[RMDB]
RNA sequence: GGGAACGACUCGAGUAGAGUCGAAAAUCACUGGUGUUUGGUUUUGUUUUCUGAGGUCCAACCCAAGCCCUUUGACUUUAGACGCAAGCAUGAACUGAACCCGGCCUGGGCUGGGAGUGCUGAGUGGUCACCUAAGUAGUUUCGACUACUUAGGUGAAAAAGAAACAACAACAACAAC
Reactivity to 2A3 in 0.01 (KOAc 150mM, MgCl2 10mM, bicine 150mM(pH8.5), 24C), signal-to-noise 2, nucleotides 027 to 126: u050c000a010c050u020g000g000u130g010u050u030u030g030g030u020u070u030u050g100u030u100u070u070c040u040g040a020g010g050u020c040c030a020a000c060c000c000a040a040g000c000c000c030u020u050u040g020a040c020u070u090u110a070g010a040c040g010c120a010a030g000c010a040u080g050a080a030c020u050g020a050a120c010c000c010g110g000c010c040u190g060g090g000c010u010g020g020g000a020g020u050g000c020u020g020a020g050u050g020g070
Reactivity to DMS in 0.01 (KOAc 150mM, MgCl2 10mM, bicine 150mM(pH8.5), 24C), signal-to-noise 8, nucleotides 027 to 126: u010c040a070c040u000g000g020u010g010u000u000u000g010g000u000u000u000u000g000u000u000u000u000c040u010g010a090g000g000u010c050c110a060a090c230c010c020a070a220g000c020c030c020u000u000u000g010a040c030u000u010u000a040g010a070c300g010c080a070a040g010c020a030u000g010a110a110c060u010g010a060a100c020c020c030g010g010c050c080u000g020g000g020c020u000g000g010g000a120g010u000g010c020u000g000a070g020u000g000g010